[RMDB]
Chemical mapping of a 177-nucleotide RNA with 2A3 and DMS.
RNA sequence: GGGAACGACUCGAGUAGAGUCGAAAAGAAGGAGAUGAAAGCGACUUUAGAAUCGGCUAACUGAGCAGACAGAUUCAGACGGCAAGUAUCGUCGCCAGAGAUACAGUCGCAAAUAGCCGCAGGAGAAACGUAGCGGAUACUUCGGUAUCCGCUACGUAAAAGAAACAACAACAACAAC
Reactivity to 2A3 in 0.01 (KOAc 150mM, MgCl2 10mM, bicine 150mM(pH8.5), 24C), signal-to-noise 1, nucleotides 027 to 126: g070a070a030g140g090a050g080a000u130g030a050a130a000g020c010g000a000c000u040u070u030a040g010a030a080u070c000g020g000c030u010a080a010c020u020g010a010g030c030a000g050a090c000a060g000a110u050u000c030a000g050a050c000g000g000c050a080a050g000u040a010u010c090g050u010c040g000c020c030a000g000a000g000a040u010a020c070a070g020u000c000g000c050a020a100a000u030a010g000c000c010g000c040a010g000g110a010g090a100a100
Reactivity to DMS in 0.01 (KOAc 150mM, MgCl2 10mM, bicine 150mM(pH8.5), 24C), signal-to-noise 2, nucleotides 027 to 126: g000a000a070g000g010a070g010a090u010g000a070a230a180g000c060g040a170c010u000u030u010a030g000a130a120u000c000g060g050c070u020a110a210c070u040g000a010g020c100a300g000a150c070a100g000a080u090u000c130a000g000a300c090g000g000c050a070a150g000u000a110u010c000g000u010c150g170c150c110a030g040a120g060a030u000a020c070a110g020u000c000g010c140a010a100a120u000a120g020c060c000g030c120a000g000g000a060g020a060a070

For 2A3 the reverse transcriptase was SuperScript II with manganese. The RNA was probed in 150 mM KOAc, 10 mM MgCl2 and 150 mM bicine (pH 8.5) at 24 C. Reactivities are given for positions 27 through 126.